[RMDB]
RNA sequence: GGGAACGACUCGAGUAGAGUCGAAAAACCGAAGCGAGGAGGAAAGCAAAGAAAGCCACGGGGCUAGCGAGUGGAUGUUCCGCCCCAAGGGGAGCCGAGUGAGGCUUAUCCCGGGGAACUCGGUAAUGCACACUGACGUUCGCGUCAGUGAAAAGAAACAACAACAACAAC
Reactivity to 2A3 in 0.01 (KOAc 150mM, MgCl2 10mM, bicine 150mM(pH8.5), 24C), signal-to-noise 7, nucleotides 027 to 129: a000c010c000g010a010a000g020c020g020a030g020g000a000g010g010a100a030a000g010c070a060a070a030g100a040a070a010g020c000c010a050c070g040g000g020g000c010u050a020g060c010g050a040g030u060g030g040a080u100g060u090u020c020c030g030c000c000c000c010a080a090g000g000g010g000a000g000c000c010g040a070g110u270g070a060g000g000c000u010u040a060u090c000c010c000g000g010g000g000a020a020c030u030c010g040g020u100a090a030u150g020c020a000
Reactivity to DMS in 0.01 (KOAc 150mM, MgCl2 10mM, bicine 150mM(pH8.5), 24C), signal-to-noise 6, nucleotides 027 to 129: a060c050c030g010a140a040g040c070g000a040g000g000a040g010g010a010a010a020g000c110a080a070a050g020a050a050a060g040c000c060a120c210g000g020g010g020c050u030a000g040c050g020a080g010u020g010g000a030u040g000u000u000c000c000g000c070c020c000c020a090a100g030g000g020g020a050g020c020c010g010a120g040u070g010a100g000g010c000u010u030a060u020c060c010c050g000g000g000g000a090a030c000u030c020g000g000u000a070a100u010g020c190a070
An RNA of 170 nucleotides, treated with 2A3 and DMS and read out base by base. The RNA was probed in 150 mM KOAc, 10 mM MgCl2 and 150 mM bicine (pH 8.5) at 24 C. 2A3 adducts were read by reverse transcription with SuperScript II with manganese. The 2A3 profile rests on 17,564 reads.